Record summary
This 207-nucleotide RNA was probed chemically with DMS. It was measured as part of the RMDB library M2RFPK. The reactions ran in a buffer of 150 mM KOAc, 10 mM MgCl2 and 150 mM bicine (pH 8.5), at 24 C. For DMS, 1,813 sequencing reads were counted. DMS adducts were read by reverse transcription with MarathonRT.
RNA sequence: GGGAACGACUCGAGUAGAGUCGAAAAUCAAUCGCAUUGUUGGGUGAAAGUUGGAGGAUAAAUCCUCACCAAGAUUUAAAUUAAGCAAGAGAUAUAAGGCCGCUCCUUAUAUUGCGACUUGCUUGAAGAUAUCCGGCAAAGUUCGCUUUGCCGGAAACUUCUACCAACAGUUCGCUGUUGGUAGAAGAAAAGAAACAACAACAACAAC
Reactivity to DMS in 0.01 (KOAc 150mM, MgCl2 10mM, bicine 150mM(pH8.5), 24C), signal-to-noise 1, nucleotides 027 to 156: u000c060a080a150u000c070g010c060a150u000u000g000u000u000g030g020g040u000g000a020a160a170g010u010u000g000g000a150g040g010a120u000a110a190a130u000c010c000u000c010a030c080c050a030a080g010a160u000u010u000a020a110a130u000u000a020a040g000c010a030a030g000a300g000a030u000a010u000a000a010g010g020c080c300g020c250u000c020c000u000u050a020u000a010u000u000g000c060g010a140c000u010u010g000c010u010u000g010a040a070g020a280u000a080u000c000c010g010g000c000a020a020a000g000u000u010c300g040c060u000u010u000g030c010c030g000g000a000a010a010